[RMDB]
RNA sequence: GGGAACGACUCGAGUAGAGUCGAAAACGUUGUCAUCGACAACACCCUAUGCAUUCAUGCUCGGUAAGGAUGCGCCGAAAGGUGAGCAAGCCCGAGUUGCCCAGACCUGAAAUGCAACACUUUAGAGAAAACCCGAAGCAGUUCGCUGCUUCGGGAAGGAGUAUUGUAUCUUCGGAUACAAUACUCCAAAAGAAACAACAACAACAAC
Reactivity to DMS in 0.01 (KOAc 150mM, MgCl2 10mM, bicine 150mM(pH8.5), 24C), signal-to-noise 1, nucleotides 027 to 156: c080g020u020u000g000u000c040a150u010c120g000a090c000a020a080c010a150c020c000c000u000a130u010g000c040a020u000u000c040a180u000g010c040u000c030g010g010u010a190a070g030g000a130u010g000c050g010c020c000g010a060a110a130g000g010u000g050a160g010c030a040a230g030c070c010c020g000a140g040u000u010g020c030c010c010a130g010a060c050c030u020g010a120a050a070u000g070c110a080a090c060a200c070u000u010u000a120g000a190g000a170a070a160a150c020c000c020g010a010a020g020c000a000g010u010u000c250g050c050u030g000c000u020u000c020g010g020g010a040a000
Reactivity to 2A3 in 0.01 (KOAc 150mM, MgCl2 10mM, bicine 150mM(pH8.5), 24C), signal-to-noise 3, nucleotides 027 to 156: c100g000u000u010g010u070c150a240u150c300g020a000c000a010a000c000a050c000c010c020u060a070u060g000c050a020u020u060c010a000u070g030c000u010c010g040g000u040a070a050g070g020a090u050g000c000g000c010c000g100a120a050a040g000g020u090g050a070g000c000a030a030g000c000c000c000g060a060g050u030u100g010c050c020c040a050g040a230c010c040u030g010a020a020a040u060g020c040a130a000c020a080c110u140u200u190a170g030a040g020a120a090a050a050c000c000c010g010a000a000g000c000a010g010u090u190c210g030c150u000g000c000u000u000c020g010g000g000a000a000